[RMDB]
RNA sequence: GGGAACGACUCGAGUAGAGUCGAAAAGAGGGUCGAAGCAGACAAAUGUCCAGUGUGUUGAGACUCGAAUCCUCUGAGUAGGCUUCGCCGUUUAUGAACCGAGGGUAGUCGUCAGACAUUGCUGACAAGCUCUGGGUUAGUUCGCUAACCCAGAGCUAAAAGAAACAACAACAACAAC
Reactivity to 2A3 in 0.01 (KOAc 150mM, MgCl2 10mM, bicine 150mM(pH8.5), 24C), signal-to-noise 1, nucleotides 027 to 126: g020a000g040g000g000u000c010g010a070a010g000c050a030g030a100c040a030a140a020u270g060u030c100c060a120g010u050g030u010g000u080u120g110a160g000a070c010u000c030g000a000a040u030c000c010u000c020u030g010a040g000u030a030g000g020c000u110u080c040g040c010c000g050u050u030u070a230u160g030a030a000c000c020g040a100g000g010g020u100a070g040u040c070g010u000c020a000g000a040c040a110u070u170g030c000u010g000a000c020a030
Reactivity to DMS in 0.01 (KOAc 150mM, MgCl2 10mM, bicine 150mM(pH8.5), 24C), signal-to-noise 2, nucleotides 027 to 126: g000a090g010g000g000u000c000g010a100a040g000c090a300g010a020c030a070a080a080u010g020u010c080c170a110g020u000g000u000g010u000u000g000a300g000a080c080u000c030g000a050a050u020c020c000u030c000u010g030a100g010u010a040g000g020c040u000u000c100g040c030c030g000u000u000u000a050u010g020a070a200c020c000g000a030g000g000g000u000a060g010u010c170g000u000c000a050g000a180c190a190u000u000g000c030u000g000a020c060a200
This 177-nucleotide RNA was probed chemically with 2A3 and DMS. DMS adducts were read by reverse transcription with MarathonRT. The RNA was probed in 150 mM KOAc, 10 mM MgCl2 and 150 mM bicine (pH 8.5) at 24 C. 2A3 is a SHAPE reagent: it acylates the 2'-hydroxyl of flexible nucleotides of all four kinds. 2A3 adducts were read by reverse transcription with SuperScript II with manganese. Reactivities are given for positions 27 through 126.